This 177-nucleotide RNA was probed chemically with DMS and 2A3. Conditions: 150 mM KOAc, 10 mM MgCl2 and 150 mM bicine (pH 8.5), 24 C. DMS adducts were read by reverse transcription with MarathonRT.
RNA sequence: GGGAACGACUCGAGUAGAGUCGAAAAGGGGUGGUGGGGGUGAUGUCCCAGUGGGUCUGACCAUACACGUCGAUCCAGAUGAGCGCCGUCUCGCGGAGAAGGCUGGGUUGACCGGAACUAAAGCGGCUCUUCCCUGUUACUUCGGUAACAGGGAAGAAAAAGAAACAACAACAACAAC
Reactivity to DMS in 0.01 (KOAc 150mM, MgCl2 10mM, bicine 150mM(pH8.5), 24C), signal-to-noise 2, nucleotides 027 to 126: g000g000g010g000u030g010g000u060g020g000g010g000g020u000g000a070u000g050u000c030c030c010a050g060u000g000g000g000u040c010u060g040a120c080c060a070u030a120c200a140c270g020u000c000g000a000u000c000c010a000g000a090u010g040a150g000c140g000c030c030g020u010c030u000c130g000c050g000g000a070g000a200a110g000g020c020u010g000g000g000u000u000g000a070c000c040g000g000a070a070c190u000a100a070a100g000c000g010g000c040
Reactivity to 2A3 in 0.01 (KOAc 150mM, MgCl2 10mM, bicine 150mM(pH8.5), 24C), signal-to-noise 3, nucleotides 027 to 126: g080g020g000g020u290g040g040u250g050g050g000g000g000u030g050a100u160g000u040c000c000c000a000g010u080g000g020g000u060c100u050g020a010c000c000a060u090a190c070a020c100g000u000c030g000a020u000c000c000a030g010a220u140g000a010g010c080g020c030c020g080u050c050u030c080g090c040g010g040a050g000a100a040g070g000c030u030g000g040g020u030u010g020a020c050c000g040g030a040a040c060u090a160a090a040g030c000g000g000c020